Notes
Source: RMDB libraries RFM100 and RFMREP, as collected in RNAgym. This 177-nucleotide RNA was probed chemically with 2A3 and DMS. For 2A3 the reverse transcriptase was SuperScript II with manganese. For DMS the reverse transcriptase was MarathonRT.
RNA sequence: GGGAACGACUCGAGUAGAGUCGAAAAGAAAGGGGUUUUGUACCACAUUCUGAGUAUUCCAGAUUGCAUAGCUUUGUGCUACUAUUGCUAUACGGUCUGGGACACUUUUAACAUGGUAUCAAAUCAAACUCAUAUAUCAAUUCGUUGAUAUAUGAGUAAAAGAAACAACAACAACAAC
Reactivity to 2A3 in 0.01 (KOAc 150mM, MgCl2 10mM, bicine 150mM(pH8.5), 24C), signal-to-noise 9, nucleotides 027 to 126: g160a020a070a010g090g020g000g000u010u020u030u040g010u010a000c000c010a010c010a060u050u040c030u050g000a000g000u000a020u010u000c000c000a000g000a010u000u010g000c010a000u000a000g000c010u050u030u030g090u170g240c080u090a090c030u100a030u020u040g000c000u000a000u000a010c010g010g000u000c000u000g000g000g000a000c000a000c000u020u020u010u040a050a040c050a040u030g000g000u010a010u100c040a010a010a010u020c010a080a040
Reactivity to DMS in 0.01 (KOAc 150mM, MgCl2 10mM, bicine 150mM(pH8.5), 24C), signal-to-noise 9, nucleotides 027 to 126: g010a060a090a080g010g000g010g010u000u000u000u010g020u000a010c000c000a010c090a270u000u000c040u000g000a010g010u000a100u000u000c000c000a010g000a020u000u000g010c040a010u000a000g010c000u000u000u000g010u010g020c250u030a090c100u020a010u000u000g000c000u000a000u000a030c000g010g000u000c000u000g000g000g000a000c040a000c000u000u000u000u000a010a040c110a180u000g000g010u000a010u010c170a010a020a010u010c060a090a110